Description: An RNA of 177 nucleotides, treated with 2A3 and DMS and read out base by base. For 2A3 the reverse transcriptase was SuperScript II with manganese. DMS adducts were read by reverse transcription with MarathonRT. The RNA was probed in 150 mM KOAc, 10 mM MgCl2 and 150 mM bicine (pH 8.5) at 24 C.
[RMDB]
RNA sequence: GGGAACGACUCGAGUAGAGUCGAAAACUACAUAGUUUCGACUAUGUAGAAACCAUUAGGAUGCAUGCAGAUGCAUAUGGACGAGGGCAACUAACCUAUUGCGAACAGCAGGUUUCGACCUGCUGAAUUACUACUUAUCUUUCGAGAUAAGUAGUAAAAAAGAAACAACAACAACAAC
Reactivity to 2A3 in 0.01 (KOAc 150mM, MgCl2 10mM, bicine 150mM(pH8.5), 24C), signal-to-noise 9, nucleotides 027 to 126: c000u000a000c000a000u010a000g010u020u060u070c170g050a010c000u000a000u000g000u000a000g010a030a000a000c010c000a020u040u160a100g140g030a020u040g000c020a010u030g030c050a030g020a250u030g000c020a030u040a080u120g060g040a040c080g040a100g020g060g020c020a060a030c050u070a030a050c010c020u050a120u060u190g060c060g060a100a050c010a000g000c000a000g010g040u010u050u110c170g080a020c010c000u000g000c000u000g000a000a000
Reactivity to DMS in 0.01 (KOAc 150mM, MgCl2 10mM, bicine 150mM(pH8.5), 24C), signal-to-noise 9, nucleotides 027 to 126: c000u000a000c000a000u000a000g010u000u000u010c170g020a040c000u000a000u000g000u000a000g000a070a080a180c020c010a100u010u010a100g010g010a050u000g000c020a020u000g000c250a070g010a040u000g010c020a020u000a050u010g010g010a090c110g010a080g000g000g000c040a040a050c070u010a080a130c040c040u000a110u000u000g010c070g010a110a200c010a000g000c000a010g010g000u000u000u010c170g010a020c000c000u000g010c000u000g000a030a050